[RMDB]
RNA sequence: GGGAACGACUCGAGUAGAGUCGAAAAGCAUACGUGUGUGUGCAUUUCUUGCUAUUGCUGCUUAGCUUCUCUAAAACACUGGGCUACGUUUUUCAACGCUCGAGAGGCAGAGUCUCAAGGAGCCUCCGGUCACACGGUUGUUCGCAACCGUGUGACCAAAAGAAACAACAACAACAAC
Reactivity to 2A3 in 0.01 (KOAc 150mM, MgCl2 10mM, bicine 150mM(pH8.5), 24C), signal-to-noise 1, nucleotides 027 to 126: g040c000a010u020a010c070g170u120g050u050g010u030g000u010g170c000a000u000u090u000c010u000u000g060c050u090a180u180u090g020c050u000g000c000u080u080a030g000c010u130u040c020u000c030u080a090a100a020a040c070a020c030u120g010g010g010c010u020a010c000g090u040u000u030u000u080c120a150a070c100g010c000u050c010g050a080g000a040g050g010c030a000g000a000g000u000c010u030c070a000a020g050g030a000g020c010c000u000c000c020